The data come from the RNA Mapping Database (RMDB), library OK3TST. The record gives the reactivity of an RNA of 207 nucleotides to 2A3 and DMS. For 2A3, 2,296 sequencing reads were counted. DMS adducts were read by reverse transcription with MarathonRT. 2A3 adducts were read by reverse transcription with SuperScript II with manganese.
RNA sequence: GGGAACGACUCGAGUAGAGUCGAAAAGAGCCGGCAGAUACGGGGCAUGCGCGAGGGACCCGGCAAACCUCAUAUGCGGCGCAUCUCAUCAUCAUCCAUGUCUGCCGACUUCGAAGACAUGGGUUUGGUACUGGAGGAGUAUAAGAGUAAGUACAAGAUUCAGAGAUCAUUUCGAUGAUCUCUGAAUAAAAGAAACAACAACAACAAC
Reactivity to 2A3 in 0.01 (KOAc 150mM, MgCl2 10mM, bicine 150mM(pH8.5), 24C), signal-to-noise 3, nucleotides 027 to 156: g050a010g030c010c010g000g030c010a010g010a060u100a090c120g040g000g020g000c080a010u030g020c010g020c010g020a020g000g010g010a040c030c010c010g010g020c010a100a110a060c000c010u030c010a050u090a080u290g090c070g020g000c000g030c010a030u010c010u010c030a160u030c010a050u060c000a010u030c020c000a020u070g010u010c010u020g060c030c000g040a090c030u150u130c050g040a050a020g010a010c010a030u060g000g000g000u050u030u060g020g000u020a030c030u040g060g020a020g060g010a030g040u090a080u020a160a040g060a010g050u080a120a010g040u030a060c040a100a050g070
Reactivity to DMS in 0.01 (KOAc 150mM, MgCl2 10mM, bicine 150mM(pH8.5), 24C), signal-to-noise 2, nucleotides 027 to 156: g010a110g020c000c010g050g000c000a060g030a140u000a030c070g000g010g040g000c070a020u000g000c050g050c030g030a110g030g010g030a200c050c030c030g000g040c040a060a070a140c040c010u010c060a210u020a110u010g000c070g070g000c030g010c030a060u000c040u000c090a100u000c110a090u010c040a050u000c040c000a030u000g010u000c020u010g000c020c040g010a060c050u000u000c020g000a100a060g000a080c020a000u000g000g020g030u000u000u010g020g040u000a090c100u000g000g010a060g020g010a090g020u000a100u000a070a090g000a110g010u000a040a130g010u000a090c080a090a160g000